RNA sequence: GGGAACGACUCGAGUAGAGUCGAAAAGUGAGUAACACGUGGGUAACCUGCCCAUAAGACUGGGAUAACUCCGGGAAACCGGGGCUAAUACCGGAUAACAUUUUGAACCGCAUGGUUCGAAAUUGAAGAGCUGACCUAAAUUCGUUUAGGUCAGCUCAAAAGAAACAACAACAACAAC
Reactivity to 2A3 in 0.01 (KOAc 150mM, MgCl2 10mM, bicine 150mM(pH8.5), 24C), signal-to-noise 2, nucleotides 027 to 126: g190u080g040a060g090u180a140a040c030a020c110g000u050g060g000g000u020a070a060c010c000u100g000c010c010c010a000u060a060a020g050a080c000u020g000g010g020a010u030a040a000c000u000c000c000g030g020g000a140a000a000c000c000g000g000g000g020c000u000a020a000u040a110c000c000g000g000a020u080a110a040c080a010u020u010u020u020g000a000a000c000c000g060c300a210u300g010g000u040u000c000g000a000a040a050u040u200g000a090a040
Reactivity to DMS in 0.01 (KOAc 150mM, MgCl2 10mM, bicine 150mM(pH8.5), 24C), signal-to-noise 1, nucleotides 027 to 126: g000u000g000a210g030u020a110a130c220a170c100g010u000g000g000g000u000a030a080c000c130u020g000c010c000c030a130u000a110a100g070a060c000u000g020g000g000a060u020a220a200c010u010c000c000g000g010g000a110a030a120c000c000g020g030g000g000c010u000a120a100u050a080c000c030g040g000a130u000a070a060c150a000u000u000u000u000g000a000a000c000c000g000c290a050u070g060g000u010u000c030g000a030a010a000u000u000g000a160a080